The record gives the reactivity of an RNA of 177 nucleotides to 2A3 and DMS.
RNA sequence: GGGAACGACUCGAGUAGAGUCGAAAACGACCAGAUCGACCUCUCGCUCGCCCCGGUCUCCGGUGGCACCUGUCAGCCCGACGUGCUCACCAUGUGGCACGCACUCCGGGGUACCGAGUUCGAUCUGUAACAUCGACAUGUUCGCAUGUCGAUGUUAAAAAGAAACAACAACAACAAC
Reactivity to 2A3 in 0.01 (KOAc 150mM, MgCl2 10mM, bicine 150mM(pH8.5), 24C), signal-to-noise 3, nucleotides 027 to 126: c020g040a080c030c020a000g000a020u000c000g010a020c020c060u090c010u020c030g000c060u070c100g020c000c000c000c000g010g010u050c100u060c050c050g000g030u070g000g000c020a130c030c090u190g040u070c020a060g060c020c030c010g050a070c010g020u010g010c060u080c170a050c040c030a070u230g030u060g050g010c030a010c080g050c010a020c030u000c000c000g000g000g000g000u000a010c000c060g000a000g000u000u000c000g000a000u000c000u000g010
Reactivity to DMS in 0.01 (KOAc 150mM, MgCl2 10mM, bicine 150mM(pH8.5), 24C), signal-to-noise 3, nucleotides 027 to 126: c080g010a170c220c010a000g010a030u000c000g020a010c300c080u000c010u000c050g000c230u000c120g010c020c000c000c000g000g010u010c060u010c140c140g010g030u000g010g000c000a040c090c080u000g030u000c100a150g000c080c040c110g000a180c080g020u000g000c010u020c010a080c070c120a110u010g020u010g020g000c040a010c030g020c110a110c060u000c000c000g000g010g000g030u020a000c300c030g010a020g000u000u000c020g000a030u000c010u000g000